[RMDB]
RNA sequence: GGGAACGACUCGAGUAGAGUCGAAAACAAAGAGACCUCCCACCGCCACGUAGACGCGGGCCACCGUCCGGGGAAGGUCAGUGGGGUCCCAGCUCAGCAAUUCUCCAAAUUCUCUCUCCCCAAUAGUGCCUCGCUUCUUAUCCUGUCUUUCAGAGCAUAUAGAAAUACUUUUCGAAGUAUUUCUAUAAAAAGAAACAACAACAACAAC
Reactivity to DMS in 0.01 (KOAc 150mM, MgCl2 10mM, bicine 150mM(pH8.5), 24C), signal-to-noise 2, nucleotides 027 to 156: c040a100a100a070g020a170g000a050c020c020u010c000c010c020a110c080c040g030c000c030a080c050g000u000a160g020a080c090g030c060g020g000g030c020c010a100c040c010g010u010c070c030g020g000g020g010a100a060g010g030u000c050a040g020u000g010g010g020g030u000c050c000c000a090g000c040u000c080a090g020c060a080a090u000u000c010u000c010c040a040a080a160u000u000c030u000c030u000c020u000c020c000c010c020a070a130u000a050g000u000g020c030c010u000c060g020c030u000u010c030u000u000a130u000c050c020u000g000u010c050u000u000u000c040a140g000a090g020c050a200
Reactivity to 2A3 in 0.01 (KOAc 150mM, MgCl2 10mM, bicine 150mM(pH8.5), 24C), signal-to-noise 2, nucleotides 027 to 156: c070a000a160a000g110a000g030a010c000c050u030c030c010c010a030c050c030g040c000c030a050c070g060u050a030g050a090c040g030c020g000g000g010c010c000a090c000c020g080u060c020c050g000g000g000g010a060a070g030g020u040c050a000g050u050g000g020g010g000u050c070c030c000a060g030c020u050c060a030g000c020a040a190u120u050c020u050c060c000a060a070a220u190u020c080u000c010u000c000u030c020c000c000c000a010a030u060a040g030u050g040c000c000u010c010g020c020u090u000c010u020u060a050u070c010c030u080g070u080c060u030u110u080c080a030g080a050g110c020a010
Record summary:
Chemical mapping of a 207-nucleotide RNA with DMS and 2A3. For DMS the reverse transcriptase was MarathonRT. The DMS profile rests on 3,467 reads. Conditions: 150 mM KOAc, 10 mM MgCl2 and 150 mM bicine (pH 8.5), 24 C. Reactivities are rounded to 0.1 and cut off at 0 and 3.